[RMDB]
RNA sequence: GGGAACGACUCGAGUAGAGUCGAAAAGAUAUGGACCAUUCGCAGCGAUAAGAAUCAUUCGGAAACGAAUGUAUUCUUUUGACGCUGUGAAUGGUCCUAAGUCAAAGGAGUUAGUUCGCUAACUCCACCAUAGCCAUUCCUUCGGGAAUGGCUAUGGAAAAGAAACAACAACAACAAC
Reactivity to DMS in 0.01 (KOAc 150mM, MgCl2 10mM, bicine 150mM(pH8.5), 24C), signal-to-noise 2, nucleotides 027 to 126: g010a030u000a300u010g010g040a000c000c000a010u010u000c000g030c000a030g030c010g040a250u010a020a010g000a030a010u000c000a000u000u000c000g000g000a130a090a150c010g000a030a010u000g000u030a000u000u000c000u000u000u000u000g000a170c080g010c010u030g000u000g000a000a010u000g000g020u010c000c000u000a000a060g010u000c030a070a210a250g040g010a020g040u050u000a020g000u000u040c260g020c010u000a000a020c000u010c000c000a090
Reactivity to 2A3 in 0.01 (KOAc 150mM, MgCl2 10mM, bicine 150mM(pH8.5), 24C), signal-to-noise 1, nucleotides 027 to 126: g040a020u060a040u030g000g000a010c000c000a040u020u010c010g000c040a000g020c040g260a090u050a300a010g020a010a000u020c010a000u000u000c000g020g020a010a020a010c010g040a000a010u000g020u070a030u010u000c010u040u080u080u120g050a070c210g000c000u020g000u000g000a000a000u000g010g000u010c000c010u000a000a000g000u000c010a040a030a050g010g000a000g010u050u000a010g000u010u250c260g000c130u010a010a000c000u000c010c000a010

Source: RMDB library TTRDES, as collected in RNAgym. An RNA of 177 nucleotides, treated with DMS and 2A3 and read out base by base. The 2A3 profile rests on 2,371 reads. For 2A3 the reverse transcriptase was SuperScript II with manganese. For DMS, 1,652 sequencing reads were counted. 2A3 is a SHAPE reagent: it acylates the 2'-hydroxyl of flexible nucleotides of all four kinds.